[RMDB]
An RNA of 207 nucleotides, treated with 2A3 and DMS and read out base by base. As a SHAPE reagent, 2A3 marks flexible, mostly unpaired nucleotides at the ribose 2'-OH.
RNA sequence: GGGAACGACUCGAGUAGAGUCGAAAAGAUAACAUAUGCUAAGUGUUAACGUGAAUGACACAGACAUUGUACCAUUUAUUUAUACAGCAAAUAUUGAAUGCUGUGCACUCCUCUAGGUGCUAGGGAAGCAGUGGUAAGACAUACCCUCUGCUUAUUAGACUCACUACUAGUUCGCUAGUAGUGAGUCAAAAGAAACAACAACAACAAC
Reactivity to 2A3 in 0.01 (KOAc 150mM, MgCl2 10mM, bicine 150mM(pH8.5), 24C), signal-to-noise 4, nucleotides 027 to 156: g060a020u160a110a060c030a030u180a020u160g060c050u090a120a170g000u030g010u040u070a140a150c150g090u120g160a110a150u190g010a050c020a000c000a040g120a020c010a040u020u040g040u070a060c000c020a010u050u120u040a100u060u230u030a210u140a050c010a000g000c000a010a100a100u190a120u260u280g090a140a060u070g000c000u010g010u010g020c000a030c090u060c020c010u050c060u100a060g000g070u060g040c040u080a020g100g020g020a010a000g000c000a000g000u010g030g000u040a050a000g130a030c030a050u090a020c000c000c040u070c000u010g000c000u000u000a060u060u020a040
Reactivity to DMS in 0.01 (KOAc 150mM, MgCl2 10mM, bicine 150mM(pH8.5), 24C), signal-to-noise 2, nucleotides 027 to 156: g020a180u010a090a070c040a070u000a020u000g020c100u000a040a170g010u000g010u000u000a010a100c100g010u000g000a170a190u000g030a050c020a040c000a270g000a070c060a050u000u000g010u000a110c040c030a160u010u020u000a060u020u010u010a110u000a080c020a020g020c010a030a030a130u000a190u000u000g040a080a150u000g010c000u000g000u000g010c110a020c000u000c000c040u010c040u000a060g010g020u010g030c060u000a070g000g000g020a030a010g020c010a060g050u000g010g040u000a090a130g030a200c130a060u000a110c040c010c100u010c010u000g010c040u000u000a120u000u000a210

The reactions ran in a buffer of 150 mM KOAc, 10 mM MgCl2 and 150 mM bicine (pH 8.5), at 24 C.
It was measured as part of the RMDB library OK3TST.